This 177-nucleotide RNA was probed chemically with 2A3 and DMS. Reactivities are given for positions 27 through 126. For DMS, 2,032 sequencing reads were counted. For DMS the reverse transcriptase was MarathonRT. 2A3 adducts were read by reverse transcription with SuperScript II with manganese. The reactions ran in a buffer of 150 mM KOAc, 10 mM MgCl2 and 150 mM bicine (pH 8.5), at 24 C.
RNA sequence: GGGAACGACUCGAGUAGAGUCGAAAAGAACACAGCUUGCUCAUUGGCUUAUGUAUAACAUUUGGCUGCUUUCAUGCUAUGAUGACAAGGUUGAGUAGUUGAGACAGAUGCCAUGUGGCUUGCAAAGGGCUAAUGCCAUAUUCGUAUGGCAUUAGCCAAAAGAAACAACAACAACAAC
Reactivity to 2A3 in 0.01 (KOAc 150mM, MgCl2 10mM, bicine 150mM(pH8.5), 24C), signal-to-noise 3, nucleotides 027 to 126: g100a080a000c050a000c020a030g000c010u020u010g010c000u000c050a090u050u110g000g000c020u190u180a020u040g070u000a110u030a160a050c050a160u020u020u040g010g000c000u000g010c050u080u120u080c030a020u120g060c050u140a090u300g160a060u060g040a040c040a100a070g120g020u060u070g000a000g010u020a010g000u010u020g060a050g000a060c000a000g020a010u060g020c010c000a030u030g060u070g040g000c030u000u030g020c020a050a060a060g090
Reactivity to DMS in 0.01 (KOAc 150mM, MgCl2 10mM, bicine 150mM(pH8.5), 24C), signal-to-noise 2, nucleotides 027 to 126: g000a200a170c090a070c080a190g000c020u000u000g000c010u010c000a060u000u010g020g000c020u000u030a140u000g000u000a050u020a040a040c090a050u000u010u000g000g000c020u000g000c220u000u000u000c020a020u000g020c160u020a080u000g010a040u000g010a010c150a080a170g010g020u010u000g010a030g110u000a050g060u000u000g000a070g000a040c010a010g010a120u010g000c020c000a040u000g030u000g000g000c030u000u000g000c020a070a030a190g020